[RMDB]
RNA sequence: GGGAACGACUCGAGUAGAGUCGAAAAACAAGUACUUCGAAAUCUAUGACGGUGGUUGUCUUAAUGCUUCUGAAGUGGUUGUUAAUAAUUUAGACAAGAGUGCUGGCCAUCCUUUUAAUAAGUUUGGAACCCUGGUAGUUCGCUACCAGGAAAAGAAACAACAACAACAAC
Reactivity to DMS in 0.01 (KOAc 150mM, MgCl2 10mM, bicine 150mM(pH8.5), 24C), signal-to-noise 8, nucleotides 027 to 129: a030c060a090a090g030u030a070c060u000u000c020g020a050a060a060u040c070u000a100u000g040a140c180g030g030u050g000g040u040u000g020u040c050u030u000a070a050u050g020c060u000u030c030u000g020a040a030g020u020g000g030u020u010g030u000u000a110a070u050a090a050u040u030u010a100g000a060c120a050a030g000a040g000u000g000c010u000g020g020c000c030a050u020c000c000u000u000u000u000a070a060u060a050a090g000u000u000u000g020g020a120a130c180
Reactivity to 2A3 in 0.01 (KOAc 150mM, MgCl2 10mM, bicine 150mM(pH8.5), 24C), signal-to-noise 9, nucleotides 027 to 129: a000c050a030a010g200u030a040c000u010u050c020g080a070a050a080u070c070u060a090u150g040a030c020g070g100u120g020g060u130u090g050u050c020u010u090a120a040u150g040c030u030u050c040u160g020a030a010g030u030g040g060u040u040g010u040u010a060a030u140a080a050u090u110u090a060g010a030c020a060a020g010a010g030u040g010c000u010g030g010c000c000a040u040c010c010u020u060u030u010a190a190u200a220a020g030u030u060u070g040g010a030a030c000